Chemical mapping of a 207-nucleotide RNA with 2A3. The 2A3 profile rests on 936 reads. The RNA was probed in 150 mM KOAc, 10 mM MgCl2 and 150 mM bicine (pH 8.5) at 24 C.
RNA sequence: GGGAACGACUCGAGUAGAGUCGAAAACUGCCGCCGGGACGCAGUGAUCCUCGCACGGUCGCACGGUCGCCUCGGGUCGGCCUCGUGUCGGCUCGACCUGCGAGGGGAGCGAGUGGCGAGCCCGACCAAAACUUUCUCGCCUUCGGGCGAGAAAGAACACGUAUUGAGCGUUCGCGCUCAAUACGUGAAAAGAAACAACAACAACAAC
Reactivity to 2A3 in 0.01 (KOAc 150mM, MgCl2 10mM, bicine 150mM(pH8.5), 24C), signal-to-noise 1, nucleotides 027 to 156: c000u040g010c000c000g000c020c000g140g040g080a130c090g010c070a110g200u010g010a020u010c000c000u000c010g000c020a040c150g060g010u060c050g040c030a060c110g010g020u010c020g030c010c010u060c020g000g000g050u040c000g020g060c000c010u080c110g250u290g030u020c050g050g000c060u080c040g000a010c000c000u010g030c000g050a000g000g010g000g000a020g030c000g020a140g020u080g010g000c020g020a060g010c000c070c010g000a010c030c010a000a000a000a130c000u000u000u000c000u000c010g020c000c020u020u090c150g060g020g020c000g000a010g010a000a000a000g000a000a020